[RMDB]
RNA sequence: GGGAACGACUCGAGUAGAGUCGAAAAACAGCCAGCGACGUGACAUAGGCGACAAAUAUUUCUCUCAUAGCAUGUUGCCAAAUGUAAAUAUUAAGGGAAAUAAAUACCCAAGCUCAUGGGAUAUUCACCAUGCUACUACCUUCGGGUAGUAGCAUGGAAAAGAAACAACAACAACAAC
Reactivity to 2A3 in 0.01 (KOAc 150mM, MgCl2 10mM, bicine 150mM(pH8.5), 24C), signal-to-noise 4, nucleotides 027 to 126: a000c010a000g010c010c010a010g010c010g120a090c040g060u050g060a000c010a070u090a100g050g010c020g000a000c010a000a140a010u110a100u050u080u010c050u000c000u010c020a030u050a030g040c040a050u110g070u060u040g050c000c060a050a180a020u120g030u060a040a080a110u210a130u120u150a100a090g080g020g010a030a060a020u120a020a100a000u150a130c000c020c020a000a020g030c030u020c090a080u030g030g000g020a030u030a070u100u090c050a030
Reactivity to DMS in 0.01 (KOAc 150mM, MgCl2 10mM, bicine 150mM(pH8.5), 24C), signal-to-noise 2, nucleotides 027 to 126: a120c070a090g000c070c010a080g010c030g060a070c070g000u020g000a080c000a050u000a110g010g010c000g000a010c040a030a050a140u010a020u000u000u070c010u000c000u030c110a050u030a110g000c160a050u000g120u030u000g010c040c050a010a020a000u000g020u000a050a090a140u020a050u000u000a130a010g040g020g010a060a060a030u000a050a080a110u040a120c010c060c000a020a040g000c180u000c060a060u000g010g040g000a130u000a030u010u030c100a070
An RNA of 177 nucleotides, treated with 2A3 and DMS and read out base by base. For 2A3, 2,558 sequencing reads were counted. The data come from the RNA Mapping Database (RMDB), library OK1LIB. Values are in units of 0.01, from 0 to 300, in steps of 10. Conditions: 150 mM KOAc, 10 mM MgCl2 and 150 mM bicine (pH 8.5), 24 C.